[RMDB]
RNA sequence: GGGAACGACUCGAGUAGAGUCGAAAAGACUCUGAGAGAGACUCUGUGUCACACUGUGAGACUGACAGUGACUCACACUCAGUGUCACUGUGACUCAGAGAGUGACAGAGUGUGAGACACUCUCUCAUGGAGGGUCUGAAUUCGUUCAGACCCUCCAAAAAGAAACAACAACAACAAC
Reactivity to DMS in 0.01 (KOAc 150mM, MgCl2 10mM, bicine 150mM(pH8.5), 24C), signal-to-noise 2, nucleotides 027 to 126: g000a170c000u000c010u030g000a070g010a050g000a050g010a200c040u000c010u000g010u010g040u020c000a020c020a110c080u010g010u000g000a030g000a140c140u000g000a040c070a030g000u000g010a130c040u000c040a060c080a100c150u010c130a080g000u000g030u010c000a010c000u000g030u000g000a090c070u000c040a050g000a010g000a090g000u000g000a010c020a060g010a060g020u000g010u000g030a100g000a090c120a100c000u000c010u010c010u000c020a110
Reactivity to 2A3 in 0.01 (KOAc 150mM, MgCl2 10mM, bicine 150mM(pH8.5), 24C), signal-to-noise 1, nucleotides 027 to 126: g010a030c020u000c000u070g040a040g010a000g000a040g040a050c030u060c070u060g190u010g080u060c050a010c010a040c090u090g060u060g180a070g060a130c120u090g130a020c000a030g010u050g020a030c040u010c000a080c010a020c080u100c090a170g070u000g000u080c000a000c000u030g020u070g040a040c020u020c010a050g060a000g020a010g120u000g000a010c000a000g050a000g050u030g030u030g060a030g020a010c010a000c010u000c000u000c000u000c000a000
Structure probing data (DMS and 2A3) for a 177-nucleotide construct. For 2A3, 963 sequencing reads were counted. Conditions: 150 mM KOAc, 10 mM MgCl2 and 150 mM bicine (pH 8.5), 24 C. For DMS the reverse transcriptase was MarathonRT.